[RMDB]
RNA sequence: GGGAACGACUCGAGUAGAGUCGAAAAUUGUGGUACCUAAGCUUAACUCCUACUAUAAGAAGUUGAUAGCACUUGGAGCGUACAACGAAAGAUAUGUGACUCCAUUUGGGGAACAAUACUUCGUUGCGCCGUAGGAUACAUUCGUGUAUCCUACGGCAAAAGAAACAACAACAACAAC
Reactivity to 2A3 in 0.01 (KOAc 150mM, MgCl2 10mM, bicine 150mM(pH8.5), 24C), signal-to-noise 2, nucleotides 027 to 126: u080u070g110u030g070g020u050a050c000c010u040a080a000g020c010u070u040a020a070c050u000c020c000u050a160c040u050a100u020a270a090g120a070a020g010u080u050g130a120u050a010g010c040a030c060u040u040g090g000a030g090c090g050u010a010c000a020a010c000g040a130a000a000g100a020u080a040u160g130u030g130a150c010u000c000c020a040u190u110u230g000g000g030g020a000a040c020a060a000u070a030c000u000u000c010g040u020u020g010c030
Reactivity to DMS in 0.01 (KOAc 150mM, MgCl2 10mM, bicine 150mM(pH8.5), 24C), signal-to-noise 2, nucleotides 027 to 126: u000u010g020u000g000g010u000a070c010c000u010a150a120g020c080u000u000a040a020c040u010c020c000u020a140c130u010a190u010a140a050g000a040a030g020u030u000g000a090u000a040g000c030a040c120u000u000g000g000a080g020c090g020u000a110c000a000a000c000g000a020a020a030g000a040u000a050u000g010u010g010a240c000u000c000c020a300u000u000u000g000g000g010g020a300a030c010a030a010u010a090c060u000u010c010g000u000u000g000c150
Chemical mapping of a 177-nucleotide RNA with 2A3 and DMS. The DMS profile rests on 1,567 reads. DMS adducts were read by reverse transcription with MarathonRT. The RNA was probed in 150 mM KOAc, 10 mM MgCl2 and 150 mM bicine (pH 8.5) at 24 C. For 2A3 the reverse transcriptase was SuperScript II with manganese. For 2A3, 1,408 sequencing reads were counted.